[RMDB]
RNA sequence: GGGAACGACUCGAGUAGAGUCGAAAAGAUCAGUUGGAAUUCCAGGCCAAUCCUAGCCUCGGCUUCCCGGGCAGCGAUGUCGAUCGGGUGGAGUUCUUCGAAGAGCGCGGCAUGCUGCGGGCGCGGACUGAUUACUAUAGUUCGCUAUAGUAAUCAGAAAAGAAACAACAACAACAAC
Reactivity to 2A3 in 0.01 (KOAc 150mM, MgCl2 10mM, bicine 150mM(pH8.5), 24C), signal-to-noise 5, nucleotides 027 to 126: g040a090u130c060a040g110u120u100g070g030a070a060u090u000c020c020a020g040g040c020c020a040a100u020c020c020u030a010g010c000c020u030c050g050g000c030u090u040c020c020c000g010g050g010c020a020g030c020g140a050u060g040u090c030g030a100u060c010g020g010g020u070g040g010a070g020u050u060c010u130u120c080g090a130a060g030a010g080c070g000c010g040g030c030a030u110g030c030u050g000c040g050g050g000c030g000c010g010g020a020
Reactivity to DMS in 0.01 (KOAc 150mM, MgCl2 10mM, bicine 150mM(pH8.5), 24C), signal-to-noise 9, nucleotides 027 to 126: g010a070u010c090a090g010u000u010g000g000a080a060u000u010c030c030a070g000g010c020c030a060a090u000c020c020u000a120g010c010c010u000c110g010g010c300u000u000c030c000c020g010g010g000c010a060g000c110g010a060u000g010u000c040g010a090u000c050g010g010g020u000g010g010a090g010u000u010c040u000u000c110g000a120a140g000a090g000c060g010c030g010g010c040a060u000g010c040u000g020c040g010g010g010c170g010c060g010g010a160